This 177-nucleotide RNA was probed chemically with DMS and 2A3. Source: RMDB library M2PK50, as collected in RNAgym. For DMS the reverse transcriptase was MarathonRT. For 2A3, 1,916 sequencing reads were counted. Values cover nucleotides 27 to 126.
RNA sequence: GGGAACGACUCGAGUAGAGUCGAAAACAGUGAGACUUCGGUCUCACUGAAAUGACUAUGCACCAUGACCAGGACGAAGAUGCGGAGGACGACGAGGAACAAAAACAGCAAGGUUCGCCUUGCUGAAUCGCUUCAUAUACUUCGGUAUAUGAAGCGAAAAAGAAACAACAACAACAAC
Reactivity to DMS in 0.01 (KOAc 150mM, MgCl2 10mM, bicine 150mM(pH8.5), 24C), signal-to-noise 3, nucleotides 027 to 126: c010a010g010u000g010a000g000a000c000u000u020c160g050g000u000c000u000c000a000c010u000g000a030a050a090u010g000a090c060u000a080u000g000c040a090c030c030a060u000g000a110c060c030a060g000g000a060c070g020a070a060g010a080u000g010c080g000g010a080g010g000a060c050g000a050c110g000a100g000g000a070a040c100a050a030a050a070a140c010a000g000c000a010a010g010g020u000u010c260g010c010c000u000u000g010c000u000g000a050a040
Reactivity to 2A3 in 0.01 (KOAc 150mM, MgCl2 10mM, bicine 150mM(pH8.5), 24C), signal-to-noise 1, nucleotides 027 to 126: c000a000g000u000g010a000g000a000c000u050u130c220g130g010u000c010u000c000a000c000u000g000a000a000a020u090g000a010c030u020a030u160g050c020a000c040c050a040u090g030a040c020c010a040g000g040a000c040g070a050a020g050a070u100g050c060g000g040a050g040g000a030c020g000a010c020g020a060g020g110a010a120c070a030a070a010a020a020c010a000g000c010a000a000g020g030u050u060c180g060c040c000u000u000g000c010u000g010a000a020